[RMDB]
RNA sequence: GGGAACGACUCGAGUAGAGUCGAAAACCGAGUGGACGUUCGUCCUCCUUCGGAUGCCCAGGUCGGACCGCGAGGAGGUGGAGAUGCCAUGCCGACCCGAAGAGGAAAGAAGGACGCGAGACACGAACAUUCUCGAUAACUUCGGUUAUCGAGAAUGAAAAGAAACAACAACAACAAC
Reactivity to DMS in 0.01 (KOAc 150mM, MgCl2 10mM, bicine 150mM(pH8.5), 24C), signal-to-noise 2, nucleotides 027 to 126: c010c000g000a100g050u000g000g000a100c040g030u000u000c060g000u000c000c000u000c040c020u010u000c040g020g010a170u010g020c070c060c000a100g030g000u000c030g010g020a160c040c060g000c150g010a110g000g000a090g000g050u010g010g010a170g010a090u000g010c030c040a080u000g000c020c020g010a000c030c000c020g000a100a020g010a190g000g010a040a100a060g010a060a050g000g020a060c050g010c080g020a090g010a110c090a030c060g000a050a180
Reactivity to 2A3 in 0.01 (KOAc 150mM, MgCl2 10mM, bicine 150mM(pH8.5), 24C), signal-to-noise 1, nucleotides 027 to 126: c010c010g010a060g000u010g040g000a050c060g080u080u070c070g010u160c020c030u000c010c020u000u040c000g090g050a090u150g080c000c020c000a060g080g000u060c020g030g020a090c040c010g000c110g050a050g080g050a030g000g100u080g020g020a140g030a100u220g030c040c000a020u070g050c000c010g020a000c000c000c000g020a040a010g050a040g050g000a070a050a060g010a030a040g010g020a000c000g010c010g050a120g030a060c000a000c030g000a070a000